Chemical mapping of a 177-nucleotide RNA with 2A3.
The data come from the RNA Mapping Database (RMDB), library OK1LIB.
For 2A3, 328 sequencing reads were counted.
RNA sequence: GGGAACGACUCGAGUAGAGUCGAAAAAGGCCAUGCCAAAAGGAAAAUCUGUUCAUUUGCUAGCAGGUAAUGUGCCUCUAUCUGGUGUUACUUCUAUUAUUAGAGCAAUUCUGACUAAAAAUGAAUGGCGUGUCUACUGUUUCGACAGUAGACACGCAAAAGAAACAACAACAACAAC
Reactivity to 2A3 in 0.01 (KOAc 150mM, MgCl2 10mM, bicine 150mM(pH8.5), 24C), signal-to-noise 1, nucleotides 027 to 126: a000g010g000c000c000a030u080g070c050c030a000a000a000a000g050g000a040a060a000a130u000c030u000g060u010u000c030a080u000u010u080g030c000u130a120g000c060a000g140g000u170a000a140u230g140u300g010c000c000u110c000u060a180u070c050u000g080g000u180g080u130u000a190c050u010u090c000u050a000u250u000a000u110u060a060g010a000g000c000a000a000u020u080c040u000g140a240c080u000a240a000a000a000a000u130g000a090a000u210g000